[RMDB]
RNA sequence: GGGAACGACUCGAGUAGAGUCGAAAACUAUGUACAGACAGUACAGUGGAUAAGGUCUAUCGAUAUCCAACUUGAACAAUGGUACUUGCAGUGGUAUCUAUCAAGAUAGGCAGGCUAUCAUAGAAAGAAGAUGUGUAUUAUUCGUAGUACACAUCUUAAAAGAAACAACAACAACAAC
Reactivity to 2A3 in 0.01 (KOAc 150mM, MgCl2 10mM, bicine 150mM(pH8.5), 24C), signal-to-noise 6, nucleotides 027 to 126: c010u020a040u050g010u000a010c020a080g180a040c020a030g050u010a000c000a020g020u040g060g020a090u040a100a020g090g030u010c010u000a000u010c050g000a000u000a020u020c010c000a000a020c010u010u010g000a080a010c050a060a070u080g020g000u010a000c000u020u080g100c060a050g020u030g060g010u010a010u000c000u000a050u020c020a010a020g010a040u040a020g060g040c050a010g020g000c010u010a000u020c000a000u010a010g050a010a100a010g140
Reactivity to DMS in 0.01 (KOAc 150mM, MgCl2 10mM, bicine 150mM(pH8.5), 24C), signal-to-noise 9, nucleotides 027 to 126: c020u000a050u020g010u000a010c010a160g020a140c260a150g000u000a010c010a040g000u020g010g010a110u020a060a110g010g000u000c040u000a020u000c070g010a040u010a020u000c010c010a080a140c030u000u000g000a050a100c230a070a060u020g000g000u000a010c010u000u020g020c190a100g010u010g000g010u000a000u000c000u010a080u020c090a030a030g000a080u020a050g010g000c130a090g000g000c090u000a010u000c010a020u010a030g000a050a070a070g010